[RMDB]
An RNA of 177 nucleotides, treated with 2A3 and DMS and read out base by base. The reactions ran in a buffer of 150 mM KOAc, 10 mM MgCl2 and 150 mM bicine (pH 8.5), at 24 C.
RNA sequence: GGGAACGACUCGAGUAGAGUCGAAAAUAGGCUAAUAACGCUUAUUUGCAUUCUUAUCAUGCCAGCAGCAUGCCGUUAAAUACUGCUUCACAGUGCUCGCUCACUGAGAAAGUUUCCACUGAAAGAUCGAGCGAAACUAAUUCGUUAGUUUCGCUCGAAAAGAAACAACAACAACAAC
Reactivity to 2A3 in 0.01 (KOAc 150mM, MgCl2 10mM, bicine 150mM(pH8.5), 24C), signal-to-noise 5, nucleotides 027 to 126: u010a000g000g000c030u100a040a050u120a300a020c120g000c000u010u010a010u000u020u040g000c030a070u020u030c050u060u110a090u150c020a030u100g020c020c040a010g040c010a000g030c010a040u030g010c030c020g030u020u060a030a090a020u120a100c040u050g050c000u040u060c050a020c010a050g060u090g080c020u040c050g000c000u050c020a070c070u060g000a000g090a070a120a000g010u020u000u000c020c020a060c030u050g090a090a110a020g100a070u060
Reactivity to DMS in 0.01 (KOAc 150mM, MgCl2 10mM, bicine 150mM(pH8.5), 24C), signal-to-noise 2, nucleotides 027 to 126: u010a000g010g010c010u000a110a130u080a070a160c300g040c010u010u000a000u000u000u000g000c100a100u000u000c010u000u000a070u040c050a100u000g000c110c030a050g040c110a010g080c000a020u000g000c140c100g000u010u000a090a050a090u030a040c010u000g020c110u000u000c080a100c000a110g040u000g010c040u000c050g020c090u020c040a040c030u000g000a070g020a090a070a190g000u000u000u000c000c110a070c270u020g040a090a120a140g010a060u000